[RMDB]
RNA sequence: GGGAACGACUCGAGUAGAGUCGAAAAAAAAGAUAUGGACCGAUGAACUACUUUCAUCUUAGUCGUUGAAACUGUAUCGGAAACGAUACAGUGGAGACUAAGUGAAAGCAUCGGUCCUAAGUCAAAAGAGAGUACAUUACUUCGGUAAUGUACUCUCAAAAGAAACAACAACAACAAC
Reactivity to DMS in 0.01 (KOAc 150mM, MgCl2 10mM, bicine 150mM(pH8.5), 24C), signal-to-noise 1, nucleotides 027 to 126: a070a080a130a130g010a020u000a050u000g000g000a010c000c000g000a010u000g000a050a010c030u010a300c000u000u010u000c020a000u020c020u000u000a000g010u000c000g000u010u030g050a090a150a020c000u000g000u000a000u000c000g010g000a000a010a040c000g040a010u010a000c000a000g010u000g000g000a000g000a020c000u000a010a000g030u000g000a000a010a000g020c010a000u000c010g040g010u010c000c000u000a000a040g000u000c010a120a100a050a120